[RMDB]
RNA sequence: GGGAACGACUCGAGUAGAGUCGAAAACACAUGCUUCCUUAGAUCCACCUUUGUGGAUGCCCGUCUUGAGCUGAGUUCUACUUGUAAACUUCUGGUUUCUUGUAGUUCCAGUCAAAGAAACAUCCAGCAAUCUAACUAGCUUCGGCUAGUUAGAUUGAAAAGAAACAACAACAACAAC
Reactivity to DMS in 0.01 (KOAc 150mM, MgCl2 10mM, bicine 150mM(pH8.5), 24C), signal-to-noise 3, nucleotides 027 to 126: c100a130c130a060u000g010c060u010u000c010c030u000u020a100g010a080u010c020c030a070c090c160u000u000u010g040u000g000g000a010u000g010c040c060c120g010u010c030u000u000g010a300g020c000u010g000a090g000u000u000c010u000a010c000u000u000g000u020a020a010a000c010u000u000c300u030g010g020u000u000u000c000u000u010g010u000a010g010u000u000c010c000a010g010u000c030a070a020a050g000a070a100a150c030a020u000c100c040a090g000
Reactivity to 2A3 in 0.01 (KOAc 150mM, MgCl2 10mM, bicine 150mM(pH8.5), 24C), signal-to-noise 4, nucleotides 027 to 126: c030a010c010a070u090g060c050u070u060c000c020u040u060a070g000a160u070c020c000a050c030c050u110u100u300g050u050g020g010a010u010g000c050c020c020g090u030c040u030u040g050a030g040c010u000g010a020g080u020u000c000u000a020c000u040u040g170u300a000a030a020c020u160u090c150u300g040g000u000u000u010c000u000u010g000u010a020g000u000u000c000c000a010g040u030c000a030a030a010g020a020a040a000c010a000u030c020c010a010g040